[RMDB]
RNA sequence: GGGAACGACUCGAGUAGAGUCGAAAAGCCAACAUAAGAAAACUUUUAGACGAGGCGGAUUACAAAGAAAUAGACCCACAAAAUGGCUUAUUUACUGGGUUCGUCCAAAACGGAGUAACCCUUGAAGGAUCCGACGAAGAUUCGUCUUCGUCGGAUCAAAAGAAACAACAACAACAAC
Reactivity to 2A3 in 0.01 (KOAc 150mM, MgCl2 10mM, bicine 150mM(pH8.5), 24C), signal-to-noise 1, nucleotides 027 to 126: g040c020c050a060a060c020a080u200a060a040g040a100a130a080a210c020u080u010u110u200a060g050a050c100g000a030g000g000c000g050g000a000u000u060a190c060a050a180a030g100a000a050a020u030a010g160a080c000c000c040a050c150a030a100a000a100u120g030g000c000u000u000a010u080u100u170a090c030u000g110g000g000u000u020c010g020u060c010c020a000a070a130a130c120g000g000a000g080u090a090a110c040c030c060u000u070g060a030a000g080